The record gives the reactivity of an RNA of 177 nucleotides to 2A3 and DMS.
RNA sequence: GGGAACGACUCGAGUAGAGUCGAAAAAGCUCUGGUUCCACCAAAGAUGCUCACAACCAGGAUACUGGCUUUGUUGACAUGCACUUGUGCUGUUCACUUGUUCACAGCUGAACUUGUAUCCAUUGGAGUAUAACACCGUUUUCGAACGGUGUUAUACAAAAGAAACAACAACAACAAC
Reactivity to 2A3 in 0.01 (KOAc 150mM, MgCl2 10mM, bicine 150mM(pH8.5), 24C), signal-to-noise 6, nucleotides 027 to 126: a000g010c010u000c010u030g030g030u120u090c060c040a030c010c010a060a110a050g080a080u130g010c010u030c020a100c010a040a120c030c020a020g000g010a030u040a090c020u030g030g020c030u110u070u070g060u050u060g040a050c030a090u120g000c010a030c030u050u060g020u040g050c080u070g100u190u140c020a030c040u050u080g040u140u090c040a050c020a080g030c030u040g020a050a030c020u020u050g020u030a010u040c020c010a060u060u110g040g020a100
Reactivity to DMS in 0.01 (KOAc 150mM, MgCl2 10mM, bicine 150mM(pH8.5), 24C), signal-to-noise 6, nucleotides 027 to 126: a070g010c030u010c020u000g000g010u000u000c120c070a160c090c060a050a070a070g010a080u010g010c060u000c060a080c120a090a110c040c030a060g000g000a080u000a030c020u000g010g000c090u000u000u000g000u000u000g010a090c130a110u000g010c040a040c050u010u000g010u000g010c140u000g010u000u010c070a040c060u010u000g010u010u000c070a070c090a070g010c060u000g010a020a040c070u010u000g000u000a030u000c020c010a150u010u000g010g010a300
The data come from the RNA Mapping Database (RMDB), library OK2TRN. For DMS the reverse transcriptase was MarathonRT. The 2A3 profile rests on 8,838 reads. Conditions: 150 mM KOAc, 10 mM MgCl2 and 150 mM bicine (pH 8.5), 24 C.